RNA sequence: GGGAACGACUCGAGUAGAGUCGAAAAAGCGCCGUAGUACGCUACGGCGCAGGAUGAUGACUCUGGAGCCCCCUGAUCUGUGAAGAGGUUUCGCGGGGCUGACCACGCUCACGUACGCGUGAGCGAACGAACAGAAUUGUUUCGACAAUUCUGUUCGAAAAGAAACAACAACAACAAC
Reactivity to DMS in 0.01 (KOAc 150mM, MgCl2 10mM, bicine 150mM(pH8.5), 24C), signal-to-noise 4, nucleotides 027 to 126: a090g010c010g020c000c000g040u000a020g000u010a080c190g020c000u010a010c010g000g010c010g030c000a000g000g010a090u020g020a120u010g010a100c040u000c040u000g000g020a090g020c010c000c000c000c030u000g010a020u020c010u000g010u020g050a180a150g010a070g010g000u000u010u010c110g020c200g010g020g000g010c000u010g000a060c010c040a180c020g000c000u010c000a000c000g010u030a090c190g030c000g010u010g010a010g000c000g000a050a090
Reactivity to 2A3 in 0.01 (KOAc 150mM, MgCl2 10mM, bicine 150mM(pH8.5), 24C), signal-to-noise 8, nucleotides 027 to 126: a000g000c000g000c010c010g010u000a000g010u030a010c290g010c100u010a010c010g010g000c000g000c000a000g000g030a030u130g020a020u150g040a040c020u010c050u120g070g030a010g000c000c000c000c000c000u010g010a010u000c010u030g110u100g180a130a110g060a070g150g030u050u070u140c100g020c130g010g000g000g000c010u000g010a000c000c020a060c010g000c000u000c010a010c010g010u050a020c260g020c010g090u000g000a000g000c000g000a060a020